Source: RMDB library OK1LIB, as collected in RNAgym. This 177-nucleotide RNA was probed chemically with 2A3. For 2A3, 453 sequencing reads were counted. Conditions: 150 mM KOAc, 10 mM MgCl2 and 150 mM bicine (pH 8.5), 24 C. Reactivities are given for positions 27 through 126. Reactivities are rounded to 0.1 and cut off at 0 and 3.

RNA sequence: GGGAACGACUCGAGUAGAGUCGAAAAGACAUUUGGGCACAACCGCAUAUUGGCCAGCAGGCCGAUGCCCUCGAUGAAGCUGCUGGCGUGCUCCUUGGGUCCGGUGAUCGCCAGCCAGCCGGCCCGGGGCGGCUAACACCUUCGGGUGUUAGCCGCCAAAAGAAACAACAACAACAAC
Reactivity to 2A3 in 0.01 (KOAc 150mM, MgCl2 10mM, bicine 150mM(pH8.5), 24C), signal-to-noise 2, nucleotides 027 to 126: g200a000c170a110u150u100u130g000g000g000c000a010c130a270a030c030c010g040c100a020u090a080u110u230g050g050c030c040a030g020c150a110g050g130c070c100g020a040u190g050c000c000c070u060c020g120a170u180g040a110a000g060c000u020g000c000u000g000g000c030g070u010g000c000u010c050c080u160u270g020g060g020u230c080c020g000g100u010g050a090u070c000g080c100c000a000g040c030c000a000g000c000c000g000g000c000c000c000g010g000